The record gives the reactivity of an RNA of 177 nucleotides to DMS. The reactions ran in a buffer of 150 mM KOAc, 10 mM MgCl2 and 150 mM bicine (pH 8.5), at 24 C. It was measured as part of the RMDB library OK2TRN.
RNA sequence: GGGAACGACUCGAGUAGAGUCGAAAAUUAAGGUUGGUUGGUUCCUUCCGGAAGGCCUUAAUUGGCCGGUUCCGGAAGGCCAAUUGGUUAAGGCCUUCCAAUUCCAAUUCCAACCUUGGAAGGUUAAUCGAUACAGACUGUUCGCAGUCUGUAUCGAAAAAGAAACAACAACAACAAC
Reactivity to DMS in 0.01 (KOAc 150mM, MgCl2 10mM, bicine 150mM(pH8.5), 24C), signal-to-noise 2, nucleotides 027 to 126: u000u000a070a020g020g010u010u000g020g010u000u000g010g020u000u010c030c040u000u000c120c110g000g000a080a130g000g000c000c000u010u010a070a110u010u010g010g020c020c010g000g010u020u010c050c090g000g000a060a060g000g000c010c000a010a050u010u000g010g030u020u000a060a100g010g010c000c010u000u000c000c000a080a100u010u000c020c000a040a100u010u010c010c010a010a010c010c010u000u000g000g000a050a030g010g030u000u000a080a130